Chemical mapping of a 177-nucleotide RNA with 2A3 and DMS. Values are in units of 0.01, from 0 to 300, in steps of 10. Conditions: 150 mM KOAc, 10 mM MgCl2 and 150 mM bicine (pH 8.5), 24 C. It was measured as part of the RMDB libraries RFM100 and RFMREP.
RNA sequence: GGGAACGACUCGAGUAGAGUCGAAAAAGGUUGUCCUCGGUUGUGCCCUGAAUUUCGGAUAAAGUCCAAGUAAUACUUUUCGAUAAUCAAGAUCUGUAAAUUUCUUCGCCGGAAACUGGAAAAACGACACAUAUUAAACAUUCGUGUUUAAUAUGUGAAAAGAAACAACAACAACAAC
Reactivity to 2A3 in 0.01 (KOAc 150mM, MgCl2 10mM, bicine 150mM(pH8.5), 24C), signal-to-noise 7, nucleotides 027 to 126: a010g060g000u030u020g020u010c010c000u010c010g010g000u030u020g030u030g030c000c000c000u020g050a140a120u020u050u080c040g010g020a030u090a190a120a020g030u010c050c020a030a020g040u070a070a120u060a160c010u050u010u030u040c030g040a070u080a170a110u130c040a070a030g010a050u000c020u040g050u080a030a070a110u030u060u020c020u040u040c010g030c020c000g010g050a070a050a060c040u040g020g020a050a100a020a010a010c050g060a020
Reactivity to DMS in 0.01 (KOAc 150mM, MgCl2 10mM, bicine 150mM(pH8.5), 24C), signal-to-noise 6, nucleotides 027 to 126: a080g010g000u010u000g020u000c060c020u000c050g010g000u000u010g020u010g010c030c010c010u010g010a080a110u000u000u010c040g000g010a090u010a060a100a110g010u000c070c050a050a080g000u010a090a120u010a110c040u000u000u010u000c030g010a070u020a070a070u030c150a090a120g000a040u010c030u000g020u010a050a060a150u010u010u010c020u010u000c110g020c030c030g000g000a030a050a090c070u010g010g010a050a040a060a060a100c170g010a220